Structure probing data (DMS and 2A3) for a 177-nucleotide construct. The DMS profile rests on 41,583 reads. Conditions: 150 mM KOAc, 10 mM MgCl2 and 150 mM bicine (pH 8.5), 24 C.
[RMDB]
RNA sequence: GGGAACGACUCGAGUAGAGUCGAAAACAUGAACGCUUGAACUGCGGCGCUCGGCCAGAGUCGAGAGGCCUUCUGGUUCGUUGCUUGACCGAAGAGGUAGUCAUCGAGCUGCGGUGCCGCGGCACCGUCUUGGGUUCGGGUUCGCUCGGACUCAAGAAAAAGAAACAACAACAACAAC
Reactivity to DMS in 0.01 (KOAc 150mM, MgCl2 10mM, bicine 150mM(pH8.5), 24C), signal-to-noise 9, nucleotides 027 to 126: c080a090u020g010a060a090c120g010c030u010u010g010a060a080c030u000g010c000g000g000c000g000c020u000c000g000g000c000c010a010g000a010g000u000c010g000a040g000a070g000g010c010c050u010u010c040u020g010g010u000u010c070g000u010u010g000c100u010u020g010a070c020c010g000a080a070g010a140g010g010u000a060g010u010c050a070u010c020g010a040g010c020u010g000c030g000g000u000g010c010c040g010c280g010g000c030a030c030c030g010
Reactivity to 2A3 in 0.01 (KOAc 150mM, MgCl2 10mM, bicine 150mM(pH8.5), 24C), signal-to-noise 4, nucleotides 027 to 126: c040a060u080g060a050a020c040g000c040u060u040g020a050a000c010u030g010c010g000g000c000g000c000u010c000g000g000c010c000a010g000a000g010u010c000g000a000g000a020g100g010c000c000u050u010c020u030g000g000u080u090c010g030u030u080g000c030u040u100g030a020c000c010g010a070a010g020a010g050g010u010a020g050u020c030a040u020c000g000a010g000c010u020g000c020g000g000u010g000c000c010g020c030g010g000c000a010c000c000g020